[RMDB]
Structure probing data (2A3 and DMS) for a 177-nucleotide construct. For 2A3 the reverse transcriptase was SuperScript II with manganese. The data come from the RNA Mapping Database (RMDB), library RFMREP. For DMS, 3,401 sequencing reads were counted.

RNA sequence: GGGAACGACUCGAGUAGAGUCGAAAAUGCGCGGAUAAAUCGACGGAUUGAAAAGCGGCGAUAUUGCUAACCGCCUGACGCGCAUUCUCAAUUAGCGACAAAACUGGACGAACUUCGGUUCGUCCAGGGUAAUAUUGUGCUUCGGCACAAUAUUACCAAAAGAAACAACAACAACAAC
Reactivity to 2A3 in 0.01 (KOAc 150mM, MgCl2 10mM, bicine 150mM(pH8.5), 24C), signal-to-noise 4, nucleotides 027 to 126: u050g000c000g000c010g010g010a010u010a020a000a020u030c040g100a130c160g250g020a020u010u030g010a000a010a010a000g000c000g010g000c040g050a060u070a070u260u180g000c020u030a030a020c000c000g010c010c000u020g010a010c000g020c000g000c020a000u070u000c010u000c000a030a260u090u070a010g030c020g100a070c110a020a110a020a050c010u000g000g010a010c000g000a010a000c000u040u050c210g080g000u010u000c000g000u000c000c000a000g000
Reactivity to DMS in 0.01 (KOAc 150mM, MgCl2 10mM, bicine 150mM(pH8.5), 24C), signal-to-noise 4, nucleotides 027 to 126: u010g010c020g030c010g000g010a020u000a020a010a010u000c010g000a180c300g000g010a010u000u010g000a050a020a230a300g000c010g010g010c050g000a080u000a130u000u000g000c030u000a090a150c010c000g000c000c000u000g000a010c010g020c000g020c000a030u010u000c020u000c040a080a140u000u010a010g030c010g040a040c300a100a030a080a290c000u000g000g000a010c000g010a010a000c000u000u020c210g020g000u000u000c000g000u000c000c000a000g000
For DMS the reverse transcriptase was MarathonRT.